[RMDB]
RNA sequence: GGGAACGACUCGAGUAGAGUCGAAAAAGCAAGAGGAAAAGUGGCUCUCCCUUAGCCAUCCGAGUGGACGUAUGUCCUCCUUCGGAUGCCCAGGUCGGACCGCGAGGAGGUGGAGAUGCCAUGCCGAGGUUAACAGUGAGUUCGCUCACUGUUAACCAAAAGAAACAACAACAACAAC
Reactivity to 2A3 in 0.01 (KOAc 150mM, MgCl2 10mM, bicine 150mM(pH8.5), 24C), signal-to-noise 2, nucleotides 027 to 126: a000g160c080a090a040g050a160g050g160a100a120a020a080g070u030g020g000c000u000c000u030c010c000c000u050u030a020g010c000c020a020u000c000c020g000a000g030u070g020g000a010c030g160u300a110u300g000u000c020c000u000c010c040u090u040c010g000g000a000u000g000c020c030c010a040g020g040u150c090g030g100a100c040c020g030c040g070a120g020g020a020g000g020u270g000g010a040g000a020u140g010c000c000a000u020g090c030c050g000a080
Reactivity to DMS in 0.01 (KOAc 150mM, MgCl2 10mM, bicine 150mM(pH8.5), 24C), signal-to-noise 1, nucleotides 027 to 126: a040g000c050a050a060g000a300g000g020a060a090a090a140g000u000g000g010c000u020c010u000c010c000c020u010u000a100g000c040c010a000u000c000c000g020a040g020u010g000g000a030c000g030u020a030u030g030u010c000c000u000c090c090u000u010c000g000g020a020u000g000c030c010c020a080g010g030u000c070g000g010a180c040c040g020c190g000a130g010g010a100g000g030u010g010g010a060g010a050u000g020c000c020a010u000g030c060c080g020a150

This 177-nucleotide RNA was probed chemically with 2A3 and DMS. The DMS profile rests on 875 reads. The 2A3 profile rests on 1,151 reads. For 2A3 the reverse transcriptase was SuperScript II with manganese. The reactions ran in a buffer of 150 mM KOAc, 10 mM MgCl2 and 150 mM bicine (pH 8.5), at 24 C.